Chemical mapping of a 177-nucleotide RNA with 2A3 and DMS. In probing experiments dimethyl sulfate is read out at A N1 and C N3, which are open when not base-paired. The reactions ran in a buffer of 150 mM KOAc, 10 mM MgCl2 and 150 mM bicine (pH 8.5), at 24 C. The 2A3 profile rests on 1,516 reads. For DMS, 1,272 sequencing reads were counted. DMS adducts were read by reverse transcription with MarathonRT. It was measured as part of the RMDB library RFM100.
RNA sequence: GGGAACGACUCGAGUAGAGUCGAAAACGUUAAUGCCAGCAGUAAGGCAACAGGCGCGACAUUUCUCAUAGAUUAUCCCUUACAAAAUACGGCAGCGACGACUGUUAUUGCCCCGGAUGUCAUCGCAGCAGUUAUCUCUGUUCGCAGAGAUAACUGCAAAAGAAACAACAACAACAAC
Reactivity to 2A3 in 0.01 (KOAc 150mM, MgCl2 10mM, bicine 150mM(pH8.5), 24C), signal-to-noise 2, nucleotides 027 to 126: c020g030u000u100a120a010u170g000c000c000a010g010c000a090g040u170a180a020g030g000c010a030a040c060a100g060g000c000g020c020g030a030c000a080u040u130u020c080u050c060a100u060a050g040a030u010u170a100u190c000c000c000u060u000a070c010a080a060a000a000u210a050c030g070g020c000a040g000c000g030a020c030g010a000c100u020g060u130u050a090u200u120g020c000c000c010c000g070g000a020u040g000u010c010a020u000c040g010c020a020
Reactivity to DMS in 0.01 (KOAc 150mM, MgCl2 10mM, bicine 150mM(pH8.5), 24C), signal-to-noise 1, nucleotides 027 to 126: c010g010u030u000a030a090u010g000c000c060a230g010c140a070g070u000a150a030g000g020c220a030a030c220a010g080g030c000g070c050g000a000c040a030u000u000u000c090u050c070a060u010a100g000a120u020u050a060u020c020c000c000u030u020a010c060a200a010a150a050u000a060c140g010g050c030a040g010c060g000a000c030g000a030c030u040g030u010u090a190u000u060g000c000c000c000c010g000g000a010u000g080u000c000a080u000c000g000c000a030